RNA sequence: GGGAACGACUCGAGUAGAGUCGAAAAUGUGAGGCUGUGAAACCAAGAGCUCUUAACACUGCGACCAAAGAUGGAAGUUCUCUAUAGGAUGCCAUGGCAUUUGAUGGUGCUAUGUUUUCUUGAGGAGAAACACAGUGUUCUUCGGAACACUGUGUUUAAAAGAAACAACAACAACAAC
Reactivity to 2A3 in 0.01 (KOAc 150mM, MgCl2 10mM, bicine 150mM(pH8.5), 24C), signal-to-noise 5, nucleotides 027 to 126: u100g000u030g030a020g030g000c030u000g050u050g200a180a040a000c010c010a060a060g060a000g030c030u050c000u090u050a060a010c060a010c040u050g010c020g050a030c030c050a080a070a060g090a070u080g010g020a020a050g050u040u000c010u000c010u010a040u090a100g010g000a020u040g020c020c000a020u030g010g040c020a010u020u010u160g160a170u240g040g010u010g000c020u020a020u050g000u010u050u020u020c010u020u050g010a070g020g060a040g090
Reactivity to DMS in 0.01 (KOAc 150mM, MgCl2 10mM, bicine 150mM(pH8.5), 24C), signal-to-noise 5, nucleotides 027 to 126: u050g010u010g020a090g010g010c030u000g000u030g000a100a060a120c090c100a050a080g000a070g010c040u020c040u000u010a080a090c080a040c120u000g010c060g000a100c020c040a070a080a080g010a080u020g000g000a070a100g010u000u000c010u000c020u000a120u040a040g010g000a040u010g000c100c010a030u010g010g000c000a010u000u000u020g010a120u030g000g020u000g010c020u010a010u000g010u010u000u000u000c020u000u000g010a100g010g010a070g010